Structure probing data (DMS and 2A3) for a 177-nucleotide construct. The data come from the RNA Mapping Database (RMDB), library TTRDES. In probing experiments dimethyl sulfate is read out at A N1 and C N3, which are open when not base-paired. For DMS the reverse transcriptase was MarathonRT. The RNA was probed in 150 mM KOAc, 10 mM MgCl2 and 150 mM bicine (pH 8.5) at 24 C. Reactivities are rounded to 0.1 and cut off at 0 and 3. Values cover nucleotides 27 to 126.

RNA sequence: GGGAACGACUCGAGUAGAGUCGAAAAGAUAUGGAUCGUGAUGGAUUAGCUCCCUGGUCGGAAACGACCAUGGAGCGAUGAUCCAUACGAUCCUAAGUCAAAAGCUCUACGGUUCGCCGUAGAGCAACUUUUCUAACCUGUUCGCAGGUUAGAAAAGAAAAGAAACAACAACAACAAC
Reactivity to DMS in 0.01 (KOAc 150mM, MgCl2 10mM, bicine 150mM(pH8.5), 24C), signal-to-noise 3, nucleotides 027 to 126: g010a030u000a110u020g010g000a010u000c000g010u000g000a030u010g010g020a030u000u010a240g010c000u000c000c000c060u000g010g020u010c000g010g000a040a040a070c010g010a020c000c010a010u000g010g000a010g010c000g000a020u010g010a020u000c000c000a020u000a020c000g000a010u000c000c000u000a010a100g000u000c010a120a120a190a160g000c000u000c000u010a000c000g010g010u000u000c300g030c000c000g020u000a010g010a000g010c010a010a010
Reactivity to 2A3 in 0.01 (KOAc 150mM, MgCl2 10mM, bicine 150mM(pH8.5), 24C), signal-to-noise 2, nucleotides 027 to 126: g010a000u030a010u070g010g000a010u000c010g020u170g240a100u000g040g000a020u130u160a140g020c000u000c000c000c000u010g020g000u000c010g010g000a030a030a020c010g000a010c000c020a000u040g000g010a000g030c000g000a000u050g000a010u000c000c000a000u010a000c010g000a000u000c000c000u000a010a000g010u000c020a000a030a160a160g010c010u000c000u010a010c000g000g110u050u130c300g030c130c000g010u010a020g000a000g000c000a000a000